[RMDB]
RNA sequence: GGGAACGACUCGAGUAGAGUCGAAAACUCAGGGGCUUCGGCCCCUGAGAAACCCGAUCAAGCGGCACUUAGACAGCUUCAUACACCUAAGAAAGUGCAUAAAAACGGUAGACUUCGGUCUACCGAAGAACGUAUAAUGGUUCGCCAUUAUACGUUCAAAAGAAACAACAACAACAAC
Reactivity to 2A3 in 0.01 (KOAc 150mM, MgCl2 10mM, bicine 150mM(pH8.5), 24C), signal-to-noise 4, nucleotides 027 to 126: c000u010c000a000g050g030g010g020c010u040u070c150g090g000c000c000c000c010u000g010a000g000a000a000a000c000c000c010g020a130u080c110a100a040g110c040g070g000c060a000c010u020u040a040g060a130c050a050g030c020u040u010c010a020u110a120c050a050c070c030u040a070a000g050a110a060a010g050u040g000c020a020u180a050a130a010a010a010c010g000g000u000a000g000a000c010u010u030c240g040g010u000c010u000a000c000c000g000a000a010
Reactivity to DMS in 0.01 (KOAc 150mM, MgCl2 10mM, bicine 150mM(pH8.5), 24C), signal-to-noise 3, nucleotides 027 to 126: c000u000c000a020g030g010g020g020c010u000u010c190g040g020c010c000c020c010u000g010a010g000a010a050a140c000c010c000g010a080u010c190a120a080g020c120g000g020c030a020c020u000u000a060g000a130c100a080g000c050u000u010c110a070u010a100c140a090c060c040u010a060a090g010a040a030a040g000u000g020c020a100u010a060a030a080a060a110c020g010g020u000a000g000a030c000u010u010c200g020g010u000c000u000a010c000c010g010a020a020